The record gives the reactivity of an RNA of 170 nucleotides to 2A3 and DMS. The 2A3 profile rests on 10,727 reads. It was measured as part of the RMDB library 15KLIB.
RNA sequence: GGGAACGACUCGAGUAGAGUCGAAAAAUAGGCUUAUCAAGAGAGGUGGAGGGACUGGCCCGAUGAAACCCGGCAGCCAGAAAUGGUGCCAAUUCCUGCUGCGGAAACGUUGAAAGAUGAGCCGAUGUACCGACCAGGUUCGCCUGGUCGAAAAGAAACAACAACAACAAC
Reactivity to 2A3 in 0.01 (KOAc 150mM, MgCl2 10mM, bicine 150mM(pH8.5), 24C), signal-to-noise 4, nucleotides 027 to 129: a000u170a020g000g000c000u000u020a000u060c100a160a020g040a040g010a070g090g020u030g020g010a050g000g010g000a020c020u010g070g030c000c000c000g120a160u060g040a000a020a020c010c000c000g000g030c000a030g180c000c000a000g010a010a050a020u050g020g000u040g020c000c000a000a030u030u030c000c000u060g040c050u030g000c010g010g020a040a020a030c040g050u050u090g080a130a090a020g010a000u010g000a000g000c020c000g010a050u040g030u010a030c010
Reactivity to DMS in 0.01 (KOAc 150mM, MgCl2 10mM, bicine 150mM(pH8.5), 24C), signal-to-noise 2, nucleotides 027 to 129: a050u050a100g000g030c010u000u000a020u040c030a150a110g020a000g000a180g030g060u040g000g000a000g000g000g000a160c020u000g000g020c040c000c030g030a100u060g000a080a050a080c010c000c000g020g040c090a030g050c030c050a060g010a060a060a070u040g010g020u010g050c000c000a000a000u010u010c000c040u040g030c040u000g000c000g000g000a040a060a070c110g020u070u050g000a110a070a060g020a030u040g020a020g040c010c020g020a060u030g000u000a080c110